[RMDB]
RNA sequence: GGGAACGACUCGAGUAGAGUCGAAAAUGCAGCAUGAAUAUCAUUGAAUUCAUGUCCUUCAUGCGGACUAUCAUGCAAGACCUCAUGCGCCACCAAUCCUCAUGGAGAUGCUAAUAUCACAACGUUCCGAUGAGGUACGUUUCGACGUACCUCAUCGAAAAGAAACAACAACAACAAC
Reactivity to DMS in 0.01 (KOAc 150mM, MgCl2 10mM, bicine 150mM(pH8.5), 24C), signal-to-noise 2, nucleotides 027 to 126: u000g050c000a200g000c000a000u020g000a010a040u000a110u080c130a210u060u040g040a080a030u000u000c000a000u020g000u000c100c020u040u010c060a050u000g000c030g070g000a040c120u000a060u000c020a090u030g020c100a030a040g010a030c190c090u000c000a150u010g000c000g040c000c000a030c070c030a090a110u020c000c030u020c000a030u000g000g030a030g010a100u060g000c070u000a050a100u030a130u000c070a110c190a170a160c150g020u010u030c010
Reactivity to 2A3 in 0.01 (KOAc 150mM, MgCl2 10mM, bicine 150mM(pH8.5), 24C), signal-to-noise 8, nucleotides 027 to 126: u150g000c020a010g000c000a010u000g010a040a030u130a040u150c160a170u080u300g130a130a060u070u040c020a010u060g030u050c030c030u010u080c010a050u070g040c030g020g000a020c020u040a090u260c080a040u110g060c010a040a050g070a150c020c020u070c020a010u060g020c020g070c020c010a050c020c000a020a030u020c000c010u040c000a010u050g030g000a060g000a050u070g040c020u060a120a080u080a120u270c070a070c040a150a080c090g040u060u020c010